[RMDB]
RNA sequence: GGGAACGACUCGAGUAGAGUCGAAAAGGUCUAUAGGAAUACUCAUACUUGUGCGCAUACUCAAUCGAAGGCGAAUACGGAACAGAAACGAUUGACAUACGUUGCAGUUCCUAUAGGGACUGCACAAGUACGUAUGUAUGUUCGCAUACAUGUGUACAAAAGAAACAACAACAACAAC
Reactivity to DMS in 0.01 (KOAc 150mM, MgCl2 10mM, bicine 150mM(pH8.5), 24C), signal-to-noise 9, nucleotides 027 to 126: g010g010u010c020u000a060u020a070g010g010a080a060u020a050c060u010c050a070u010a070c070u010u010g020u010g010c040g010c050a060u010a080c140u000c030a040a050u010c040g000a090a080g000g000c070g010a060a070u020a070c120g010g010a060a060c110a080g000a080a070a080c060g000a050u010u010g010a050c140a050u010a030c070g000u010u000g010c030a020g000u000u000c000c000u010a090u030a100g010g000g000a020c020u000g000c010a010c150a020a080
Reactivity to 2A3 in 0.01 (KOAc 150mM, MgCl2 10mM, bicine 150mM(pH8.5), 24C), signal-to-noise 9, nucleotides 027 to 126: g070g010u040c040u060a110u140a090g060g070a080a050u070a100c020u030c070a050u070a140c040u080u100g020u040g060c020g000c010a010u030a110c010u020c040a010a060u040c030g060a080a020g070g010c040g030a040a020u120a080c070g050g070a090a030c030a060g100a050a090a010c040g030a050u020u070g040a020c020a030u120a030c060g070u070u060g000c000a000g000u010u010c010c000u060a080u090a120g000g000g010a010c000u010g000c010a010c010a040a030
This 177-nucleotide RNA was probed chemically with DMS and 2A3.
DMS adducts were read by reverse transcription with MarathonRT.
The RNA was probed in 150 mM KOAc, 10 mM MgCl2 and 150 mM bicine (pH 8.5) at 24 C.
The DMS profile rests on 98,754 reads.